[RMDB]
RNA sequence: GGGAACGACUCGAGUAGAGUCGAAAAGCGUAGGCUUGAGGUUUAAGACUUGCGUCGCCUACGGUCUUGGAUAGCCCCCGCCAGGCAGGGACCCCAAUCUUUAAAACGGAGCGGCAAACAACGCCGCAUAGCGUCACCCAUUCGUGGGUGACGCUAUAAAAGAAACAACAACAACAAC
Reactivity to DMS in 0.01 (KOAc 150mM, MgCl2 10mM, bicine 150mM(pH8.5), 24C), signal-to-noise 1, nucleotides 027 to 126: g000c000g050u000a040g030g040c000u020u010g000a080g000g040u010u010u000a090a030g000a120c000u000u020g000c170g000u010c140g000c000c000u000a010c000g000g050u000c000u000u000g000g000a040u010a160g070c060c000c030c010c030g000c020c020a080g030g020c110a130g010g010g040a120c000c000c010c110a060a080u000c100u000u000u000a050a030a150a220c130g080g030a130g000c000g000g020c000a160a110a030c300a070a170c180g020c050c000g000c010
Reactivity to 2A3 in 0.01 (KOAc 150mM, MgCl2 10mM, bicine 150mM(pH8.5), 24C), signal-to-noise 2, nucleotides 027 to 126: g000c000g010u020a000g020g000c010u010u150g070a060g050g070u080u050u090a180a100g020a050c000u050u110g060c050g160u130c000g010c000c000u050a050c000g000g000u130c060u000u100g010g060a130u010a040g050c000c000c000c000c050g010c000c000a010g100g080c010a000g120g000g060a030c000c000c000c000a010a120u010c030u220u300u300a090a130a000a000c040g010g030a030g040c000g000g050c010a090a200a000c060a070a020c120g040c020c020g000c020
Conditions: 150 mM KOAc, 10 mM MgCl2 and 150 mM bicine (pH 8.5), 24 C.
This 177-nucleotide RNA was probed chemically with DMS and 2A3.
The 2A3 profile rests on 693 reads.
The DMS profile rests on 1,121 reads.
Values cover nucleotides 27 to 126.
DMS adducts were read by reverse transcription with MarathonRT.
The data come from the RNA Mapping Database (RMDB), library RFM100.